[RMDB]
RNA sequence: GGGAACGACUCGAGUAGAGUCGAAAACCGAAAGGGUCGAGGGGAAGCCGACCGUAGCGGGGAUCCGAGUUCCAACCCUCCCUUAAGGGGGUGCACUGGAGCCUACGCCCCCGCCGGUCUGGUGGUACUUUAUGAAACAGUUCGCUGUUUCAUAAAGAAAAGAAACAACAACAACAAC
Reactivity to 2A3 in 0.01 (KOAc 150mM, MgCl2 10mM, bicine 150mM(pH8.5), 24C), signal-to-noise 2, nucleotides 027 to 126: c010c020g020a090a080a010g090g000g030u080c040g040a050g000g040g010g010a000a050g010c000c000g000a000c000c000g000u040a020g020c010g000g010g020g000a030u120c090c000g000a030g000u010u000c100c020a220a300c260c010c010u050c020c000c000u180u210a170a170g000g020g000g010g030u150g020c010a040c110u010g020g000a000g000c000c010u050a030c010g020c000c000c010c000c010g000c010c000g020g000u000c050u060g000g010u010g020g000u020a050
Reactivity to DMS in 0.01 (KOAc 150mM, MgCl2 10mM, bicine 150mM(pH8.5), 24C), signal-to-noise 5, nucleotides 027 to 126: c010c020g010a090a080a140g010g000g020u000c050g010a080g000g010g000g010a160a210g020c020c010g000a010c010c000g000u000a070g020c010g010g000g000g000a030u010c160c030g000a160g010u010u010c000c000a040a120c070c020c000u010c000c010c070u010u020a150a190g020g010g000g000g010u010g010c110a090c090u000g000g000a020g020c020c040u000a060c060g000c300c000c000c000c000g030c000c020g000g000u000c000u010g030g010u000g000g000u010a100